The record gives the reactivity of an RNA of 207 nucleotides to 2A3 and DMS.
The 2A3 profile rests on 1,855 reads.
Conditions: 150 mM KOAc, 10 mM MgCl2 and 150 mM bicine (pH 8.5), 24 C.
DMS adducts were read by reverse transcription with MarathonRT.
RNA sequence: GGGAACGACUCGAGUAGAGUCGAAAAUCAUUGAGAUGGUGGGCGCUAUGGUCGUCCUCCUCCGGCUGACCUCCUUCUCAGCUGCUGACCGGCGCCGCACAGGCGGCAUCUCAGCUUCGUGUGCAAAAAAAGAAUGGUCGGUUCGCCGACCAUUCAACAAAGAUAGUUGGUUCGCCAACUAUCUUUGAAAAGAAACAACAACAACAAC
Reactivity to 2A3 in 0.01 (KOAc 150mM, MgCl2 10mM, bicine 150mM(pH8.5), 24C), signal-to-noise 3, nucleotides 027 to 156: u080c030a040u030u150g010a060g010a020u080g020g060u020g030g000g000c010g000c030u110a160u300g150g000u130c000g020u020c010c000u020c030c010u010c030c020g010g000c010u020g040a090c020c040u060c020c030u160u060c010u000c030a020g000c020u030g000c060u050g040a080c000c040g020g030c010g010c030c020g010c000a090c020a060g160g010c000g020g020c000a020u000c000u010c040a040g010c030u110u110c060g120u050g020u020g070c060a110a170a000a010a000a000a010g010a010a000u000g000g000u000c020g000g020u060u070c190g000c020c000g000a000c010c000a000u000u000c000a000a000
Reactivity to DMS in 0.01 (KOAc 150mM, MgCl2 10mM, bicine 150mM(pH8.5), 24C), signal-to-noise 2, nucleotides 027 to 156: u000c060a160u010u000g000a030g000a050u010g010g000u000g020g010g010c010g020c010u020a060u010g070g010u000c000g020u000c020c030u000c020c010u010c040c010g000g010c020u000g000a080c030c040u000c100c100u010u010c060u000c000a080g000c020u000g020c040u000g000a030c050c050g040g020c030g020c020c010g040c030a070c190a090g020g020c070g060g000c030a040u000c010u000c030a080g010c070u010u010c070g030u010g030u010g000c020a010a000a100a100a080a100a140g000a010a000u010g000g010u000c020g010g020u000u000c280g040c000c000g010a010c000c000a000u010u000c000a080a160